[RMDB]
RNA sequence: GGGAACGACUCGAGUAGAGUCGAAAAUAAUGCAGGCUGGCUGCCGAGGGUGCCUGGACCCGAGGUGGCGAGAUCUUCCCAGGACCGGCUCUGAGUAUCCCGUCCGUGGGAGCCUCAGGGACGUAGCAAAUCGCGGACUACGCACGUAGGGUCGAAGCAACAGAGGAUAGUUCGCUAUCCUCUGUUGAAAAGAAACAACAACAACAAC
Reactivity to DMS in 0.01 (KOAc 150mM, MgCl2 10mM, bicine 150mM(pH8.5), 24C), signal-to-noise 2, nucleotides 027 to 156: u000a080a080u000g010c060a050g030g000c010u010g000g000c000u010g010c020c020g020a300g010g000g010u000g000c080c050u000g040g010a230c000c010c000g010a300g000g000u000g000g000c000g000a070g000a040u010c070u000u010c030c000c000a160g020g020a080c170c020g000g000c010u010c000u000g000a060g000u000a040u000c010c000c000g000u010c040c050g000u000g020g010g000a010g010c090c000u000c010a030g000g020g020a040c000g010u000a070g000c110a040a030a040u010c040g000c020g020g000a070c020u040a110c030g010c040a060c080g020u010a110g000g050g040u010c010g000a090a160g000
Reactivity to 2A3 in 0.01 (KOAc 150mM, MgCl2 10mM, bicine 150mM(pH8.5), 24C), signal-to-noise 3, nucleotides 027 to 156: u200a030a070u130g040c030a030g060g000c010u060g040g000c000u000g000c000c000g000a040g000g000g000u050g030c030c050u080g040g080a040c020c010c010g000a010g000g010u020g000g000c000g020a010g010a030u050c050u110u040c030c000c000a020g030g060a020c050c010g010g000c000u000c000u010g010a010g010u020a030u020c010c000c000g020u060c030c050g000u170g010g000g000a010g000c000c000u000c000a000g030g000g010a000c000g030u090a020g030c060a030a010a060u080c040g000c020g020g020a010c020u070a030c130g050c050a040c120g060u090a070g050g020g020u040c010g020a030a010g020
This 207-nucleotide RNA was probed chemically with DMS and 2A3. The reactions ran in a buffer of 150 mM KOAc, 10 mM MgCl2 and 150 mM bicine (pH 8.5), at 24 C. For DMS, 3,925 sequencing reads were counted.